[RMDB]
RNA sequence: GGGAACGACUCGAGUAGAGUCGAAAAAGUAGCCACCAGCCCUGCUCUCUGCAGUGUUCUAUUGUGGAUUGCUUGUGUGCUGGCAGGCUACUACUGGUAAGAAUGGCUAGUGUCAGCAGGGAUGGCUCUCCAUUUAUAUGUUCGCAUAUAAAUGGAGAAAAGAAACAACAACAACAAC
Reactivity to DMS in 0.01 (KOAc 150mM, MgCl2 10mM, bicine 150mM(pH8.5), 24C), signal-to-noise 4, nucleotides 027 to 126: a080g010u000a010g020c010c000a300c000c010a020g000c010c000c010u000g010c000u000c040u000c000u010g000c000a010g020u000g010u010u020c170u020a010u000u010g020u000g000g010a010u000u000g000c000u000u000g000u010g040u010g040c000u000g000g000c060a070g020g010c000u000a000c010u000a020c070u010g020g000u010a080a080g010a070a070u010g010g010c020u000a050g000u000g010u000c040a060g000c040a060g000g000g000a110u000g010g000c120u000
Reactivity to 2A3 in 0.01 (KOAc 150mM, MgCl2 10mM, bicine 150mM(pH8.5), 24C), signal-to-noise 6, nucleotides 027 to 126: a000g000u000a000g000c000c000a010c000c010a000g010c000c000c000u000g000c010u000c000u000c000u010g000c010a020g010u010g110u220u130c140u190a040u040u010g000u010g020g000a010u000u010g020c040u150u060g050u020g060u120g130c010u010g000g020c030a050g000g010c000u000a000c000u000a000c010u040g040g030u090a100a050g070a140a100u100g060g000c040u040a030g040u030g030u140c020a010g010c020a020g040g000g040a060u050g050g000c020u000

Chemical mapping of a 177-nucleotide RNA with DMS and 2A3. 2A3 is a SHAPE reagent: it acylates the 2'-hydroxyl of flexible nucleotides of all four kinds. The data come from the RNA Mapping Database (RMDB), library RFMREP.